The record gives the reactivity of an RNA of 177 nucleotides to DMS and 2A3. High DMS reactivity at an A or C suggests that its Watson-Crick edge is free. The reactions ran in a buffer of 150 mM KOAc, 10 mM MgCl2 and 150 mM bicine (pH 8.5), at 24 C. The DMS profile rests on 1,680 reads. The data come from the RNA Mapping Database (RMDB), library OK2TRN.
RNA sequence: GGGAACGACUCGAGUAGAGUCGAAAAGAUCAAUUAUGAUUGCAAUGUAAUAUGUCAAGGCAGACAUAUCUAGCUGUCGCCUUAGCUAGAGAUGGCCGAUUUAUUGCUUUCAUAAGAACGGCCAGAACCCUAGUCGAUAGUUCGCUAUCGACUAGGGAAAAGAAACAACAACAACAAC
Reactivity to DMS in 0.01 (KOAc 150mM, MgCl2 10mM, bicine 150mM(pH8.5), 24C), signal-to-noise 2, nucleotides 027 to 126: g020a080u010c100a110a190u000u010a050u000g000a000u000u000g000c010a020a000u000g030u000a050a040u010a090u000g020u000c120a090a090g030g000c040a110g000a300c060a020u000a030u010c010u000a000g020c020u000g010u000c120g010c160c070u000u000a040g000c010u000a010g000a040g010a060u000g000g000c000c010g010a110u000u000u000a030u000u000g000c000u010u000u000c020a030u000a010a000g000a070a130c140g000g010c060c020a120g010a100a110
Reactivity to 2A3 in 0.01 (KOAc 150mM, MgCl2 10mM, bicine 150mM(pH8.5), 24C), signal-to-noise 2, nucleotides 027 to 126: g040a090u130c060a000a120u070u020a010u040g000a010u020u010g000c000a000a000u040g040u190a050a040u080a070u270g170u130c080a070a120g030g000c040a010g010a200c010a010u050a000u030c010u010a020g030c020u020g080u160c050g140c060c060u080u090a020g000c010u000a000g000a000g010a050u010g000g000c000c040g000a010u020u090u010a030u020u020g020c000u040u010u040c000a000u010a010a020g030a050a020c080g020g000c030c010a020g030a080a060